[RMDB]
RNA sequence: GGGAACGACUCGAGUAGAGUCGAAAAGGACUAACCUCGGGUGUUGGUUUGGGUAUGGCAAACGCUGCAAAAACUAGAUUCAGUCAAGGACAUUUACUUUGGCUACGUUGGUCCAACCGAAUACGGGGCCAUUUCUAUUAUUCGUAAUAGAAAUGGCAAAAGAAACAACAACAACAAC
Reactivity to DMS in 0.01 (KOAc 150mM, MgCl2 10mM, bicine 150mM(pH8.5), 24C), signal-to-noise 8, nucleotides 027 to 126: g020g010a030c040u000a050a070c120c060u000c060g010g000g010u000g010u010u000g010g000u010u010u000g000g010g000u000a070u020g010g000c040a090a050a060c110g000c050u010g020c060a020a040a030a040a040c090u000a050g000a070u010u020c100a050g010u000c050a040a030g000g010a130c260a090u030u020u020a060c030u000u000u000g010g010c010u000a060c130g000u000u000g000g010u000c010c020a070a150c020c010g010a080a070u030a070c110g000g010g000
Reactivity to 2A3 in 0.01 (KOAc 150mM, MgCl2 10mM, bicine 150mM(pH8.5), 24C), signal-to-noise 9, nucleotides 027 to 126: g070g010a000c020u010a020a050c010c030u040c040g020g010g030u060g040u070u090g040g040u030u020u070g060g000g020u130a130u100g050g000c030a070a100a040c100g010c040u050g020c070a070a050a040a020a020c050u080a030g020a130u130u180c050a000g020u020c010a020a000g030g020a080c070a140u150u180u080a080c110u020u020u030g010g010c010u040a030c040g020u020u030g010g000u020c010c010a030a020c030c000g000a040a030u120a110c050g020g000g060